[RMDB]
RNA sequence: GGGAACGACUCGAGUAGAGUCGAAAAAUCAAGCACCUGUUGGGUGGACGGCACACCUCCCAGUGGCCAGCUGGAGACGGAGGGCUGGAAGUACUUGCCCGGCUCCUCUCUCUGUAGGUUUGGUCUUCGGCCUUGCAGCUGCCCUGGUGCUUGCAGACGGUAAAUAAUAUUUCGAUAUUAUUUACCGAAAAGAAACAACAACAACAAC
Reactivity to 2A3 in 0.01 (KOAc 150mM, MgCl2 10mM, bicine 150mM(pH8.5), 24C), signal-to-noise 3, nucleotides 027 to 156: a000u070c000a000a000g020c000a010c000c010u070g070u220u060g090g010g020u030g000g040a060c060g140g050c080a040c020a050c130c010u050c010c010c000a020g030u050g030g030c110c020a010g000c020u050g030g030a010g000a050c130g060g010a020g010g010g010c040u020g010g030a100a020g050u120a140c080u180u220g070c000c000c000g030g020c040u200c030c000u020c000u010c010u000c010u070g260u160a080g100g000u090u130u280g030g010u060c010u150u180c060g010g000c010c010u040u110g040c030a010g000c010u020g000c000c000c000u010g000g000u000g010c000u000u000g020c010a010g060a070
Reactivity to DMS in 0.01 (KOAc 150mM, MgCl2 10mM, bicine 150mM(pH8.5), 24C), signal-to-noise 1, nucleotides 027 to 156: a110u020c010a020a050g000c030a010c000c020u010g000u020u000g000g000g030u000g000g010a100c040g040g020c060a150c100a150c010c020u000c050c010c040a140g010u010g030g030c030c060a080g010c020u010g000g010a090g000a020c090g010g010a050g000g000g000c000u000g030g000a120a090g010u000a050c090u010u000g030c100c000c010g060g000c020u010c010c000u000c030u000c040u010c030u010g020u010a110g010g000u010u010u000g030g000u000c030u000u000c060g050g040c000c000u000u000g020c030a090g020c020u000g000c020c020c040u010g010g020u000g030c020u000u000g010c070a060g000a260

Chemical mapping of a 207-nucleotide RNA with 2A3 and DMS.
For 2A3, 3,845 sequencing reads were counted.
High DMS reactivity at an A or C suggests that its Watson-Crick edge is free.
Conditions: 150 mM KOAc, 10 mM MgCl2 and 150 mM bicine (pH 8.5), 24 C.
DMS adducts were read by reverse transcription with MarathonRT.